Conditions: 150 mM KOAc, 10 mM MgCl2 and 150 mM bicine (pH 8.5), 24 C. The record gives the reactivity of an RNA of 207 nucleotides to 2A3.

RNA sequence: GGGAACGACUCGAGUAGAGUCGAAAAGUGCUACAGGUGCUUGUCCUAUACGAUAGGUUUUGGCAGCACCUGAGCAUGUGUCUAAACUGCUCAUUUACUCUGCGGCGUAAGAGUCAUAAACUUACGUUAUGGCGUAAAGAUCAUACAAACUGAAAGGUAUCACAGCAGCAUUCGUGCUGCUGUGAUAAAAAGAAACAACAACAACAAC
Reactivity to 2A3 in 0.01 (KOAc 150mM, MgCl2 10mM, bicine 150mM(pH8.5), 24C), signal-to-noise 1, nucleotides 027 to 156: g000u000g000c020u070a150c000a000g000g000u020g040c000u060u200g080u300c000c070u050a050u050a060c140g300a280u220a180g190g000u090u020u190u090g000g000c000a000g000c000a000c000c000u000g000a000g000c000a000u080g020u020g020u000c070u130a150a100a100c110u150g020c000u000c020a090u000u020u020a000c000u000c000u000g110c120g050g000c000g000u060a000a000g000a070g110u250c020a060u130a160a050a060c000u000u010a020c000g000u000u000a090u060g000g010c020g000u000a000a020a000g010a050u140c060a070u160a020c000a000a070a060c020u120g020a230a000a000g130g150